[RMDB]
The record gives the reactivity of an RNA of 207 nucleotides to 2A3. The data come from the RNA Mapping Database (RMDB), library M2RFPK. Reactivities are given for positions 27 through 156. The reactions ran in a buffer of 150 mM KOAc, 10 mM MgCl2 and 150 mM bicine (pH 8.5), at 24 C.
RNA sequence: GGGAACGACUCGAGUAGAGUCGAAAAGUUUACGCUCCAAGAUCGGUGGAAAGCAGCCCUAUCAAUAUCUAGGAGAACUGUGCUAUGUUUAGAAGAUUAGGUAGUCUCUAAACAGAACAAUUUACCUCAUACGUUAGGACGUUCGCGUCCUAACGAACCCUAGUUGCUCCUUCGGGAGCAACUAGGGAAAAGAAACAACAACAACAAC
Reactivity to 2A3 in 0.01 (KOAc 150mM, MgCl2 10mM, bicine 150mM(pH8.5), 24C), signal-to-noise 1, nucleotides 027 to 156: g000u010u120u130a040c060g000c040u010c010c000a000a030g000a110u080c120g030g070u060g010g100a170a020a000g030c010a020g000c010c000c000u010a060u020c060a150a150u060a010u060c020u030a010g020g020a040g030a090a040c060u080g020u050g090c080u060a040u080g000u020u000u000a040g000a300a000g000a060u150u010a040g020g020u060a000g050u000c000u000c000u000a000a000a000c010a000g020a080a000c080a010a060u020u040u030a010c020c040u020c050a030u080a150c010g000u000u020a000g000g000a000c000g020u020u100c170g030c000g030u010c000c000u000a000a000c000g000a000a000